[RMDB]
An RNA of 207 nucleotides, treated with 2A3 and read out base by base. Reactivities are given for positions 27 through 156. Reactivities are rounded to 0.1 and cut off at 0 and 3. 2A3 adducts were read by reverse transcription with SuperScript II with manganese. The reactions ran in a buffer of 150 mM KOAc, 10 mM MgCl2 and 150 mM bicine (pH 8.5), at 24 C.
RNA sequence: GGGAACGACUCGAGUAGAGUCGAAAAGAGAUGGCGAGAGCCAUCGGUAGUAUAGGGAAAAUCAUAAAUGAGAAGAGCUCUAAACGCCUAAGUAGAGUUAAAAUAAUUAGACAGGCACUACUACAAACACGGCCUCGAACGUUCGCGUUCGAGGCAACCUUUCGGAUAUGUUCGCAUAUCCGAAAGGAAAAGAAACAACAACAACAAC
Reactivity to 2A3 in 0.01 (KOAc 150mM, MgCl2 10mM, bicine 150mM(pH8.5), 24C), signal-to-noise 1, nucleotides 027 to 156: g060a000g000a000u030g020g020c010g010a100g020a000g050c000c000a000u000c020g000g010u010a020g010u000a030u100a060g010g010g060a020a060a000a020u090c020a060u140a210a170a060u180g050a070g030a110a050g000a000g000c010u060c010u040a050a040a030c110g000c000c000u060a180a000g000u020a000g030a020g060u240u300a000a010a000a000u150a050a030u270u020a010g000a020c020a010g000g050c060a000c020u030a000c010u070a050c110a010a190a030c070a040c170g030g000c030c020u020c000g000a000a000c000g020u110u130c260g000c000g080u000u010c000g000a000g000g030c000a000a000